[RMDB]
RNA sequence: GGGAACGACUCGAGUAGAGUCGAAAAACUUAUAAGAUAUUGGCGCGACACUCUCAGAACCUUAGACAUUCUGGGAGAAGUGGAAAAAUGAGUAUUUGACCAGUCUAAGGGAACGAACACAGAAAGAUAAAUCGAUAUUAUUCGUAAUAUCGAUUUAAAAAGAAACAACAACAACAAC
Reactivity to DMS in 0.01 (KOAc 150mM, MgCl2 10mM, bicine 150mM(pH8.5), 24C), signal-to-noise 8, nucleotides 027 to 126: a070c030u000u000a040u000a100a130g010a120u000a100u010u010g010g010c040g020c030g020a100c170a110c010u000c010u000c010a020g010a050a060c060c050u000u000a050g010a060c100a300u010u000c020u000g000g000g000a030g000a030a060g020u000g010g010a010a050a070a080a040u000g000a030g010u000a100u000u000u000g000a160c020c020a100g020u000c010u000a020a040g010g000g010a060a070c100g010a080a070c150a050c110a090g010a070a090a070g000a160
Reactivity to 2A3 in 0.01 (KOAc 150mM, MgCl2 10mM, bicine 150mM(pH8.5), 24C), signal-to-noise 4, nucleotides 027 to 126: a010c100u180u070a100u040a170a110g040a100u120a090u230u170g100g020c020g000c020g060a010c000a000c040u010c000u000c000a020g010a090a100c020c060u050u030a000g000a010c010a090u050u000c010u000g020g000g000a000g000a010a000g040u050g050g070a080a080a020a010a030u070g010a020g040u060a130u090u060u070g040a030c000c000a020g010u010c010u020a020a020g010g000g000a010a040c030g000a050a000c090a000c040a070g190a080a090a010g070a040

This 177-nucleotide RNA was probed chemically with DMS and 2A3. The 2A3 profile rests on 5,549 reads. The reactions ran in a buffer of 150 mM KOAc, 10 mM MgCl2 and 150 mM bicine (pH 8.5), at 24 C. For 2A3 the reverse transcriptase was SuperScript II with manganese. Source: RMDB library OK2TST, as collected in RNAgym. Reactivities are given for positions 27 through 126.